Source: RMDB library OK1LIB, as collected in RNAgym. Structure probing data (DMS and 2A3) for a 177-nucleotide construct. The RNA was probed in 150 mM KOAc, 10 mM MgCl2 and 150 mM bicine (pH 8.5) at 24 C. Reactivities are given for positions 27 through 126.
[RMDB]
RNA sequence: GGGAACGACUCGAGUAGAGUCGAAAAUGUUAGGCCUUUCGGUUACAGUCACAUUAUGCAGUGACACAGUACCAUUGUUGUAAACAGUGACUGUGUAGUUUACAAUGUCUCCAGUGCCGACAAUCACCAUAGCUAGCGUGUUCGCACGCUAGCUAUGAAAAGAAACAACAACAACAAC
Reactivity to DMS in 0.01 (KOAc 150mM, MgCl2 10mM, bicine 150mM(pH8.5), 24C), signal-to-noise 3, nucleotides 027 to 126: u030g000u010u030a100g000g010c080c000u000u020u000c040g000g000u010u010a030c030a200g000u000c070a010c020a050u000u050a040u030g000c170a090g010u050g000a050c010a030c070a060g010u020a110c240c020a020u010u020g000u000u020g020u000a070a080a040c100a050g020u010g000a030c010u000g010u000g000u000a080g010u000u000u030a100c080a020a030u000g020u000c040u000c010c030a070g010u000g000c010c000g000a060c230a050a110u020c120a050c200
Reactivity to 2A3 in 0.01 (KOAc 150mM, MgCl2 10mM, bicine 150mM(pH8.5), 24C), signal-to-noise 6, nucleotides 027 to 126: u110g020u010u060a110g030g020c010c000u040u080u130c060g000g040u070u100a020c020a040g000u030c010a000c010a030u050u120a090u300g140c070a060g050u010g090a020c010a000c020a060g060u070a110c050c000a010u000u040g060u030u080g190u170a080a140a010c010a020g010u000g070a060c010u000g010u020g040u090a030g040u010u080u040a070c100a040a070u050g040u020c010u000c030c060a050g020u020g090c000c010g000a000c040a020a070u180c050a030c100